Structure probing data (2A3) for a 207-nucleotide construct. The reactions ran in a buffer of 150 mM KOAc, 10 mM MgCl2 and 150 mM bicine (pH 8.5), at 24 C.
RNA sequence: GGGAACGACUCGAGUAGAGUCGAAAACUGCAGGUCAACGGAUUUUCUUCAGAUCAGCUAUUGCAGAAGAAAGGUCAGCCAAGCGCUCUGGGCCGAAUCGACUGUAUAUAGGAGCUUCUGAUUUCAACCAGAAGCUAACUCUCUCCGAAACAAUGAGCACCUAUACCUGGUUCGCCAGGUAUAGGUGAAAAGAAACAACAACAACAAC
Reactivity to 2A3 in 0.01 (KOAc 150mM, MgCl2 10mM, bicine 150mM(pH8.5), 24C), signal-to-noise 2, nucleotides 027 to 156: c030u050g000c010a020g000g060u050c030a000a050c080g110g010a020u070u060u040u050c050u090u090c030a050g020a290u050c060a030g050c020u070a040u090u130g000c000a010g010a060a000g010a030a020a020g000g000u010c000a000g040c070c020a150a060g060c090g030c160u080c090u180g050g020g000c000c010g040a020a100u050c000g000a010c000u000g030u030a010u020a010u020a210g110g020a030g010c030u010u000c020u000g080a150u120u200u300c020a040a040c030c000a000g000a000a000g000c000u010a020a020c020u020c020u050c020u020c040c040g100a110a090a010c030a020a150u170g010a000g020
The data come from the RNA Mapping Database (RMDB), library OK3TST. For 2A3 the reverse transcriptase was SuperScript II with manganese.